[RMDB]
RNA sequence: GGGAACGACUCGAGUAGAGUCGAAAAUGUCUCACCGGCCCGCGCCUUUAUCUGCUCAGAAACCACCGUAAAGGAGGGAUGGCGGGCAAGUUUUUCCGCAGUACGGGUUUCAUCCAGUGAGGAAUACCUACACUUAGGUCUUCGGACCUAAGUGUAGAAAAGAAACAACAACAACAAC
Reactivity to 2A3 in 0.01 (KOAc 150mM, MgCl2 10mM, bicine 150mM(pH8.5), 24C), signal-to-noise 1, nucleotides 027 to 126: u040g030u000c010u000c050a060c030c010g140g010c010c020c040g040c020g020c010c000u060u070u010a150u150c030u060g030c010u000c160a020g100a120a080a050c000c020a000c020c020g020u090a100a040a040g060g040a030g020g030g080a080u030g130g050c000g000g010g020c000a000a000g000u000u020u020u090u000c030c010g000c010a030g030u060a020c010g020g010g000u020u120u140c000a030u010c010c020a010g000u000g030a040g000g000a030a070u070a060c000
Reactivity to DMS in 0.01 (KOAc 150mM, MgCl2 10mM, bicine 150mM(pH8.5), 24C), signal-to-noise 2, nucleotides 027 to 126: u010g000u010c010u000c000a080c040c050g010g010c040c030c020g040c170g000c010c030u010u000u000a050u000c060u000g020c060u010c070a090g010a060a090a050c080c070a070c090c060g000u000a060a080a130g010g010a120g000g000g000a040u010g020g010c090g000g010g020c090a020a030g010u000u000u000u010u000c030c030g010c030a100g030u020a180c100g020g010g010u000u000u010c100a060u010c030c040a060g010u000g000a060g010g010a080a100u000a070c120
About this RNA
Structure probing data (2A3 and DMS) for a 177-nucleotide construct. For 2A3, 1,426 sequencing reads were counted. The reactions ran in a buffer of 150 mM KOAc, 10 mM MgCl2 and 150 mM bicine (pH 8.5), at 24 C. DMS adducts were read by reverse transcription with MarathonRT. The DMS profile rests on 1,617 reads.